[RMDB]
Source information: Source: RMDB library M2RFOK, as collected in RNAgym. An RNA of 207 nucleotides, treated with 2A3 and DMS and read out base by base. For 2A3, 3,588 sequencing reads were counted.
RNA sequence: GGGAACGACUCGAGUAGAGUCGAAAAUCAGAAUCAGGCCGGAGUGUUUAGCGCUGCGUAAACACGGUCGUACAUCCAGCCGGUAGCCUGGUUCCUUGCAUUGAGUGAUGUACGGAGUUUAUAGAGCAAAAGAAAGACCUGUUCGCAGGUCUUUCAAGAUACCAUGUAGGUUCGCCUACAUGGUAUCAAAAGAAACAACAACAACAAC
Reactivity to 2A3 in 0.01 (KOAc 150mM, MgCl2 10mM, bicine 150mM(pH8.5), 24C), signal-to-noise 4, nucleotides 027 to 156: u100c000a010g040a020a010u020c000a000g020g000c020c020g090g030a130g020u020g030u030u030u040a060g020c200g060c260u240g020c050g060u020a010a010a000c020a000c010g030g040u060c000g000u020a000c000a010u000c010c020a020g100c040c020g030g060u100a040g020c010c000u000g000g010u010u030c030c010u040u120g020c020a140u070u170g080a050g070u120g020a010u000g000u000a000c020g020g020a050g010u100u200u030a200u130a040g090a020g030c050a060a030a080a030g010a010a000a000g000a000c000c000u020g030u100u090c240g000c080a000g000g000u010c000u000u010u000c000a000a000
Reactivity to DMS in 0.01 (KOAc 150mM, MgCl2 10mM, bicine 150mM(pH8.5), 24C), signal-to-noise 2, nucleotides 027 to 156: u000c080a010g010a070a050u010c010a010g000g030c010c040g010g030a250g030u010g010u000u010u000a090g010c030g040c070u010g010c040g000u010a010a020a050c010a060c020g010g010u000c010g010u000a010c010a030u010c010c030a220g030c050c060g030g050u000a150g000c020c020u000g010g030u000u000c000c030u000u010g020c080a190u020u000g010a180g020u000g010a060u000g000u000a040c020g020g000a110g000u000u010u000a090u010a120g010a130g020c040a130a050a120a180g010a030a000a020g010a010c000c000u010g000u000u010c270g000c010a020g000g020u000c000u000u010u010c000a050a090

Conditions: 150 mM KOAc, 10 mM MgCl2 and 150 mM bicine (pH 8.5), 24 C.